An RNA of 207 nucleotides, treated with 2A3 and DMS and read out base by base.
It was measured as part of the RMDB library OK3TST.
[RMDB]
RNA sequence: GGGAACGACUCGAGUAGAGUCGAAAAGGGAAGAGUGGAACUCAUUUCCAAGGACUCUGUGUGACCUCUGUCCUUGAGACCACUGACUGUCAUUUCCAUGCAGCCAUGUCUUUUCUGCAGGUAUUACAGAACAGACAGUGACAAUCAAGCCAUACUACAUCAUCACGCAUUUCGAUGCGUGAUGAUGAAAAGAAACAACAACAACAAC
Reactivity to 2A3 in 0.01 (KOAc 150mM, MgCl2 10mM, bicine 150mM(pH8.5), 24C), signal-to-noise 3, nucleotides 027 to 156: g030g010g020a060a060g020a010g060u110g000g090a050a020c010u010c080a140u070u070u060c020c020a010a020g050g020a020c010u020c060u050g100u010g100u120g190a080c010c030u020c070u110g040u000c000c000u030u020g040a040g020a070c040c010a010c000u010g030a050c020u040g040u050c030a050u050u080u050c040c080a090u040g000c020a020g010c060c050a140u190g020u120c000u080u120u050u000c000u010g000c010a030g090g000u050a040u040u150a080c050a030g030a170a010c000a030g070a020c010a010g000u010g050a030c100a040a060u070c050a060a000g050c010c030a130u110a140c080u090a040
Reactivity to DMS in 0.01 (KOAc 150mM, MgCl2 10mM, bicine 150mM(pH8.5), 24C), signal-to-noise 1, nucleotides 027 to 156: g000g010g000a050a030g010a010g050u010g000g000a050a300c080u060c060a180u000u000u000c030c000a030a020g050g000a100c060u000c010u000g010u000g010u000g010a140c100c000u000c020u010g010u010c060c050u000u000g000a110g000a060c040c000a090c120u010g020a080c040u000g000u110c070a070u010u010u010c050c050a190u000g050c080a090g000c030c030a110u000g000u000c020u000u000u010u000c000u010g000c030a020g020g010u000a130u020u000a010c040a030g000a040a000c030a040g000a020c040a030g010u000g010a060c000a090a160u000c040a050a140g000c080c040a060u000a080c040u000a300
Description
The DMS profile rests on 1,646 reads. The 2A3 profile rests on 1,628 reads. DMS (dimethyl sulfate) methylates the pairing face of unpaired adenines and cytosines.